[RMDB]
An RNA of 177 nucleotides, treated with DMS and 2A3 and read out base by base. The RNA was probed in 150 mM KOAc, 10 mM MgCl2 and 150 mM bicine (pH 8.5) at 24 C. For 2A3 the reverse transcriptase was SuperScript II with manganese.
RNA sequence: GGGAACGACUCGAGUAGAGUCGAAAAGCGAACACCCUUCUCAGCCGGCAACGCCACCACAUAAAUCCUUAUUUACGCCAGCGCGGGUCAAUUUUUUUUUUUAAUUGAUCAUGGGUUCUCGGGAAGAAUUCUGACUUAUUUUCGAAUAAGUCAGAAUAAAAGAAACAACAACAACAAC
Reactivity to DMS in 0.01 (KOAc 150mM, MgCl2 10mM, bicine 150mM(pH8.5), 24C), signal-to-noise 3, nucleotides 027 to 126: g000c040g010a060a070c070a140c030c020c010u000u000c060u010c040a100g010c070c040g010g010c040a070a080c090g000c020c020a060c020c060a070c080a070u010a050a090a100u000c030c030u000u020a110u010u000u000a050c090g000c030c010a060g010c070g020c090g020g000g000u000c000a000a000u000u000u040u000u000u000u070u020u010u010u030a020a030u000u010g000a020u000c010a060u010g020g010g020u000u000c020u000c040g000g010g000a080a060g000a080
Reactivity to 2A3 in 0.01 (KOAc 150mM, MgCl2 10mM, bicine 150mM(pH8.5), 24C), signal-to-noise 1, nucleotides 027 to 126: g030c030g030a030a000c010a030c000c000c000u010u050c030u030c010a030g020c020c030g060g000c000a050a010c030g000c010c010a020c010c010a030c010a030u120a050a060a010u010c010c010u070u130a140u080u130u070a060c030g040c010c000a030g000c050g050c010g050g000g020u030c010a000a010u080u130u030u020u020u010u000u000u000u040u160a010a040u030u040g000a000u080c030a080u040g060g040g000u020u040c050u020c010g040g020g040a000a060g080a040